[RMDB]
Overview:
Structure probing data (2A3) for a 177-nucleotide construct. It was measured as part of the RMDB library OK1LIB. Reactivities are given for positions 27 through 126.

RNA sequence: GGGAACGACUCGAGUAGAGUCGAAAAGACUGCGUGCACUGGAGACGAUAUCGAGCCGGAAAUUAAUCGAUAAUGUCUCAUGUAGUGGAUACGAUCCGGCAAGUAUCGACUACGUGUGCUCGUAGGACGAUAUGCGCCACUUCGGUGGCGCAUAUCGAAAAGAAACAACAACAACAAC
Reactivity to 2A3 in 0.01 (KOAc 150mM, MgCl2 10mM, bicine 150mM(pH8.5), 24C), signal-to-noise 1, nucleotides 027 to 126: g010a000c000u000g000c000g000u000g000c000a010c010u010g020g020a030g000a010c000g030a020u000a000u090c000g000a020g000c000c000g050g030a040a040a040u280u170a030a140u130c000g000a000u020a030a020u200g030u010c020u050c000a060u070g000u000a040g000u010g220g000a000u000a020c000g000a040u000c000c000g000g000c000a000a080g000u000a000u000c050g190a010c000u000a000c000g030u040g000u000g010c000u000c000g000u030a000g000g000a000